[RMDB]
RNA sequence: GGGAACGACUCGAGUAGAGUCGAAAAGAUAUGGAUGGUAGAGGGUGAACUACUAGGGUUCUCGGAAACGAGAAUGCUAGCACCUACCCACCUACCAUCCUAAGUCAAACUCCCAGUUCGCUGGGAGCACUAAGGUACUCUUCGGAGUACCUUAGUGAAAAGAAACAACAACAACAAC
Reactivity to DMS in 0.01 (KOAc 150mM, MgCl2 10mM, bicine 150mM(pH8.5), 24C), signal-to-noise 9, nucleotides 027 to 126: g020a040u010a300u010g000g000a010u000g010g000u000a010g020a300g010g000g000u000g000a070a060c180u010a160c000u000a000g000g010g020u000u000c000u000c000g010g010a100a120a200c000g020a020g010a010a000u000g000c000u000a000g000c060a040c140c080u000a050c040c010c020a190c150c010u000a000c000c000a010u000c000c000u000a010a090g000u000c040a080a080a260c010u000c000c000c000a020g010u000u020c300g010c000u000g000g000g000a010g000
Reactivity to 2A3 in 0.01 (KOAc 150mM, MgCl2 10mM, bicine 150mM(pH8.5), 24C), signal-to-noise 7, nucleotides 027 to 126: g040a020u100a050u190g000g000a010u010g000g020u010a000g020a070g040g010g020u050g030a130a080c080u190a020c010u010a300g100g090g020u010u000c010u000c000g020g030a090a070a040c010g000a000g020a020a000u110g250c010u000a010g030c030a050c010c020u100a110c020c010c000a140c020c010u000a010c000c010a000u000c000c000u000a060a020g040u000c030a070a050a120c010u000c010c000c000a010g040u090u130c300g030c100u000g000g020g000a010g010
Source information:
Chemical mapping of a 177-nucleotide RNA with DMS and 2A3. The DMS profile rests on 14,195 reads. Conditions: 150 mM KOAc, 10 mM MgCl2 and 150 mM bicine (pH 8.5), 24 C. For DMS the reverse transcriptase was MarathonRT. For 2A3, 30,651 sequencing reads were counted. For 2A3 the reverse transcriptase was SuperScript II with manganese.